This 177-nucleotide RNA was probed chemically with 2A3 and DMS. For DMS the reverse transcriptase was MarathonRT. The RNA was probed in 150 mM KOAc, 10 mM MgCl2 and 150 mM bicine (pH 8.5) at 24 C. Source: RMDB library M2PK50, as collected in RNAgym.
RNA sequence: GGGAACGACUCGAGUAGAGUCGAAAAAGAAUCUCCUUCGGGAGAUUCUGAACCACUAAGCUGAUUGGGGAUGACGACGAGGCAGCUCGUGUCGAGCAACCACCGAGAACAGGUUCGCCUGUUCUAAGGACAUUGUAGAGUUCGCUCUACAAUGUCCAAAAGAAACAACAACAACAAC
Reactivity to 2A3 in 0.01 (KOAc 150mM, MgCl2 10mM, bicine 150mM(pH8.5), 24C), signal-to-noise 3, nucleotides 027 to 126: a000g010a010a000u000c000u000c000c020u000u070c180g120g000g000a010g010a000u000u000c000u000g000a000a010c000c000a020c100u140a130a060g070c060u050g080a150u140u170g020g010g040g010a040u090g030a010c130g020a010c010g000a040g020g080c090a120g060c040u000c000g040u050g040u040c010g040a020g020c020a050a080c020c020a040c030c070g140a020g000a030a000c000a000g010g060u030u050c210g070c030c000u010g000u000u000c000u010a030a060
Reactivity to DMS in 0.01 (KOAc 150mM, MgCl2 10mM, bicine 150mM(pH8.5), 24C), signal-to-noise 4, nucleotides 027 to 126: a010g000a020a010u000c000u000c000c000u000u010c180g040g010g000a010g010a010u000u000c000u000g000a100a200c010c000a140c190u020a060a100g010c080u000g000a100u010u000g000g000g000g000a140u010g010a100c060g000a050c040g020a050g000g010c240a100g010c000u000c010g020u000g000u000c020g000a170g000c070a090a070c020c030a090c140c090g000a040g000a010a010c010a000g000g010u000u010c250g010c000c010u000g000u000u000c000u000a030a070